[RMDB]
RNA sequence: GGGAACGACUCGAGUAGAGUCGAAAAUGCAUUUGGAACGCUGCUGCAUAUAUGAAACUCUCGGAUGCACUUAAACGACAGAUUCGCAUUGCAUGCCGUAAGUGUAAUUUAGCUUUCCGGUUAACCAUCAACCUCGAGUUCGCUCGAGGUAAAAGAAACAACAACAACAAC
Reactivity to 2A3 in 0.01 (KOAc 150mM, MgCl2 10mM, bicine 150mM(pH8.5), 24C), signal-to-noise 9, nucleotides 027 to 129: u070g010c020a030u040u040u170g030g010a040a020c060g010c040u050g000c010u050g000c060a020u070a000u030a030u170g140a100a070a040c070u070c020u010c070g040g020a020u030g000c010a020c060u100u160a130a130a030c030g090a030c030a060g080a270u110u080c040g010c100a040u010u080g010c010a010u080g160c000c000g010u020a030a040g010u000g020u090a090a180u050u090u080a020g010c000u010u020u010c030c000g010g020u030u060a030a030c020c000a040u100c050a040
Reactivity to DMS in 0.01 (KOAc 150mM, MgCl2 10mM, bicine 150mM(pH8.5), 24C), signal-to-noise 9, nucleotides 027 to 129: u040g020c040a050u000u000u010g000g010a060a030c040g000c090u030g000c080u000g020c050a040u060a050u040a040u020g020a090a180a070c040u020c070u010c000g010g000a080u000g040c050a060c170u040u050a070a130a200c060g000a080c140a080g040a120u040u000c070g070c100a010u010u020g020c030a050u030g030c000c030g050u050a000a020g030u030g020u030a100a090u000u000u000a060g000c040u000u050u000c000c030g000g000u000u000a070a110c050c040a060u070c140a100
Conditions: 150 mM KOAc, 10 mM MgCl2 and 150 mM bicine (pH 8.5), 24 C. The record gives the reactivity of an RNA of 170 nucleotides to 2A3 and DMS. The DMS profile rests on 41,286 reads. It was measured as part of the RMDB library 15KLIB. For 2A3, 35,735 sequencing reads were counted. DMS (dimethyl sulfate) methylates the pairing face of unpaired adenines and cytosines. DMS adducts were read by reverse transcription with MarathonRT.